Structure probing data (2A3 and DMS) for a 207-nucleotide construct. The data come from the RNA Mapping Database (RMDB), library OK3TST. For DMS the reverse transcriptase was MarathonRT. DMS (dimethyl sulfate) methylates the pairing face of unpaired adenines and cytosines.
RNA sequence: GGGAACGACUCGAGUAGAGUCGAAAAGCAGUUUCACUCACUGUAGACUCUGAGCGCAGAGUCUCAGUCGUGCUACCACAUGCACGUGAUCAGAGUAUGUGUGAACUCUGACUGAGGACACAAUCGCUUGUGUCCUAUAUAAUGAAACUGGUGAGUCGCUCAGCUAAUCAUUCGUGAUUAGCUGAGCAAAAGAAACAACAACAACAAC
Reactivity to 2A3 in 0.01 (KOAc 150mM, MgCl2 10mM, bicine 150mM(pH8.5), 24C), signal-to-noise 3, nucleotides 027 to 156: g060c020a000g000u000u010u000c030a010c050u060c030a040c030u030g000u120a000g000a000c000u010c000u010g060a110g250c210g010c090a000g000a000g000u020c000u010c000a000g000u040c000g000u000g010c010u080a110c020c150a090c040a110u080g000c010a000c060g030u020g060a180u110c030a000g010a000g040u020a040u160g190u040g060u100g120a060a010c010u000c010u000g010a000c000u040g010a010g010g020a000c000a000c000a010a140u250c110g050c290u050u010g000u000g000u000c010c000u000a000u000a000u000a020a050u050g000a010a020a010c000u020g080g110u140g060a030g080u090c050
Reactivity to DMS in 0.01 (KOAc 150mM, MgCl2 10mM, bicine 150mM(pH8.5), 24C), signal-to-noise 1, nucleotides 027 to 156: g080c000a000g000u000u010u010c000a040c070u000c140a020c030u000g200u000a060g030a000c010u000c010u000g030a280g000c240g000c030a040g030a060g040u000c000u000c010a020g000u010c010g000u010g020c010u000a300c130c130a000c200a130u000g010c010a050c010g050u000g000a050u010c050a030g010a040g050u000a060u000g030u010g000u070g020a080a020c000u000c020u010g000a000c010u000g000a100g040g020a000c010a020c000a040a030u000c220g010c290u000u000g080u000g020u010c010c010u000a020u000a010u000a050a050u000g010a020a020a040c000u000g000g020u000g010a070g050u000c080